RNA sequence: GGGAACGACUCGAGUAGAGUCGAAAAUUCCAUUUGAGUAUCCUGAAAACGGACUUUUCAGCAUGGAACGUACAUAUUAAAUAGUAGGAGUGCAUAGUGGCCCGUAUAGCAGGCAUUAACAUUCCUGAAAACGUGAAAAGGUUCGCCUUUUCACGAACAUAUGCUCUCCGUUCGCGGAGAGCAUAUGAAAAGAAACAACAACAACAAC
Reactivity to 2A3 in 0.01 (KOAc 150mM, MgCl2 10mM, bicine 150mM(pH8.5), 24C), signal-to-noise 3, nucleotides 027 to 156: u000u000c000c000a000u050u000u040g040a040g020u060a060u070c020c020u060g040a040a040a040a130c160g040g020a010c030u110u130u070u020c030a030g000c070a030u040g010g050a090a010c050g050u090a020c070a070u130a100u120u300a110a140a110u170a060g170u030a020g010g000a000g000u030g000c070a030u030a140g090u070g160g100c000c000c020g120u150a120u140a190g100c100a010g060g000c000a010u020u020a000a060c010a030u040u000c000c000u010g070a070a090a020a010c000g010u000g010a000a000a000a000g020g000u020u060c190g110c000c000u000u000u000u010c000a000c000g000a000a000
Reactivity to DMS in 0.01 (KOAc 150mM, MgCl2 10mM, bicine 150mM(pH8.5), 24C), signal-to-noise 2, nucleotides 027 to 156: u000u000c020c000a050u000u020u040g010a110g020u000a060u000c040c000u000g010a140a030a300a250c130g000g040a010c050u020u000u010u000c010a050g000c140a040u000g020g020a040a030c040g040u000a140c120a060u000a080u000u000a030a080a150u010a180g020u000a020g000g000a040g020u010g010c040a090u000a070g010u000g030g040c020c010c020g080u000a090u000a160g020c080a010g000g000c030a060u000u000a060a030c030a090u000u000c010c000u010g000a060a020a120a130c020g030u000g000a020a000a010a020g010g030u010u000c300g010c020c010u000u000u000u000c030a000c010g000a020a070

Structure probing data (2A3 and DMS) for a 207-nucleotide construct. In probing experiments dimethyl sulfate is read out at A N1 and C N3, which are open when not base-paired. Conditions: 150 mM KOAc, 10 mM MgCl2 and 150 mM bicine (pH 8.5), 24 C. It was measured as part of the RMDB library M2RFPK.